[RMDB]
RNA sequence: GGGAACGACUCGAGUAGAGUCGAAAAAGCUCAGACGGAAUUGCAGAACGAAUACCACAAAUCCUUGACAUUGAAGGAAGCAGAGCUCUUGACGCUCAAGAUCUUGAAACAGGUUAUGGAGGAGAAGUUGGAUUGCAAGAACGCUCAAUUGGCUUCGUAAUGUGACAAAUUUCGAUUUGUCACAUUAAAAAGAAACAACAACAACAAC
Reactivity to DMS in 0.01 (KOAc 150mM, MgCl2 10mM, bicine 150mM(pH8.5), 24C), signal-to-noise 5, nucleotides 027 to 156: a110g020c040u010c030a100g020a210c040g020g020a060a130u000u010g020c050a110g010a050a130c060g030a130a100u010a150c020c030a110c050a060a110a150u000c020c020u000u000g020a130c120a120u000u000g020a130a060g010g010a070a080g030c030a200g020a050g010c020u000c080u010u000g020a100c120g020c030u000c020a070a120g000a060u000c030u000u000g010a150a080a090c090a080g010g010u000u000a090u010g020g000a060g010g000a160g000a060a100g010u000u000g010g010a170u000u000g020c010a060a080g010a060a070c070g020c030u000c060a090a130u010u000g010g010c040u000u000c020g010
Reactivity to 2A3 in 0.01 (KOAc 150mM, MgCl2 10mM, bicine 150mM(pH8.5), 24C), signal-to-noise 7, nucleotides 027 to 156: a000g040c040u040c050a030g020a040c030g020g040a090a040u050u030g000c020a030g030a100a020c060g040a110a070u100a200c040c040a050c020a040a080a050u040c010c000u050u070g040a060c040a110u070u130g050a060a010g040g010a020a010g030c040a030g000a000g010c000u010c020u080u160g060a060c100g000c030u010c020a010a030g020a070u010c010u060u070g050a060a060a000c040a030g040g010u060u050a060u130g050g010a030g010g020a050g000a070a030g030u060u070g010g050a090u010u080g010c010a030a030g020a080a030c030g020c060u020c060a020a170u110u110g020g000c000u020u010c010g020